Conditions: 150 mM KOAc, 10 mM MgCl2 and 150 mM bicine (pH 8.5), 24 C. The record gives the reactivity of an RNA of 177 nucleotides to 2A3 and DMS. The DMS profile rests on 872 reads.
RNA sequence: GGGAACGACUCGAGUAGAGUCGAAAAUUAGGUGUUCUGCUUUGAGGGGCUUGCUCCGUUCUGCUUUACAAUUAACAACUAAUUUAGAACUGUGACGAUCACGGGGAAUCCAACUGUUUAAUUAAAAACCGAAUCCUCAAUUCGUUGAGGAUUCGGUAAAAGAAACAACAACAACAAC
Reactivity to 2A3 in 0.01 (KOAc 150mM, MgCl2 10mM, bicine 150mM(pH8.5), 24C), signal-to-noise 2, nucleotides 027 to 126: u000u000a000g130g000u000g000u020u000c070u120g100c000u210u010u120g030a070g000g060g030g000c020u000u150g000c020u010c010c010g020u080u000c000u030g040c000u000u150u060a030c010a050a240u280u140a090a000c000a020a020c000u120a070a000u120u070u010a000g020a000a000c000u000g000u000g040a100c290g170a100u280c040a040c040g050g000g000g020a020a020u010c000c010a000a040c100u050g010u070u090u050a040a110u000u160a220a000a000a000
Reactivity to DMS in 0.01 (KOAc 150mM, MgCl2 10mM, bicine 150mM(pH8.5), 24C), signal-to-noise 1, nucleotides 027 to 126: u010u000a000g000g020u000g000u000u010c030u000g000c020u060u000u000g000a040g000g000g020g000c070u020u000g010c020u000c080c000g000u100u000c050u000g000c020u000u050u000a070c290a000a010u000u010a130a120c120a010a260c130u000a010a060u000u000u000a040g000a140a210c110u000g050u140g060a100c220g000a180u020c020a000c040g000g000g000g020a070a110u000c090c050a050a190c210u000g010u000u000u000a060a110u000u020a130a080a180a080